[RMDB]
RNA sequence: GGGAACGACUCGAGUAGAGUCGAAAAACAUAUUACGAUAUGAUUCAGAUGAUGUCUUACUGGUUCGUACCAAGGGACAUAAUGGUUUCUUGUUUCCAACCAAAGAACAAGUGGCGAGCCUGAAUAAAAAACUGACUGCCGUUCGCGGCAGUCAGAAGAAUACAUGAGUGUUCGCACUCAUGUAUUCAAAAGAAACAACAACAACAAC
Reactivity to DMS in 0.01 (KOAc 150mM, MgCl2 10mM, bicine 150mM(pH8.5), 24C), signal-to-noise 1, nucleotides 027 to 156: a060c080a040u010a100u020u000a060c080g020a130u000a060u000g000a180u010u000c100a070g020a130u000g010a120u000g020u020c040u030u000a130c030u020g030g030u020u000c150g000u000a140c070c030a090a120g040g010g010a080c060a040u000a150a170u010g030g040u000u000u000c010u000u000g000u000u000u010c020c050a090a130c120c060a020a170a140g020a060a060c030a020a150g010u000g020g020c020g000a060g030c010c000u000g000a070a080u110a000a070a120a050a070a170c000u000g020a040c000u010g020c000c020g020u000u000c300g040c010g040g060c000a010g020u000c000a000g000a040a040
Reactivity to 2A3 in 0.01 (KOAc 150mM, MgCl2 10mM, bicine 150mM(pH8.5), 24C), signal-to-noise 4, nucleotides 027 to 156: a000c020a020u120a040u120u180a080c130g050a040u020a030u140g090a100u050u120c090a090g080a170u140g010a010u050g080u000c000u030u100a130c030u080g030g040u040u150c100g100u180a050c030c000a020a030g020g000g000a000c000a010u130a080a140u100g040g000u010u010u000c010u010u000g020u020u020u000c020c040a080a110c030c010a070a080a010g030a020a020c010a010a010g030u030g060g020c040g020a030g020c010c040u030g070a070a020u130a120a080a030a000a010a030c000u000g000a000c000u000g000c000c010g020u040u070c280g010c010g080g000c000a000g000u000c000a000g000a000a000
The record gives the reactivity of an RNA of 207 nucleotides to DMS and 2A3. The RNA was probed in 150 mM KOAc, 10 mM MgCl2 and 150 mM bicine (pH 8.5) at 24 C. It was measured as part of the RMDB library M2RFPK. The DMS profile rests on 1,755 reads.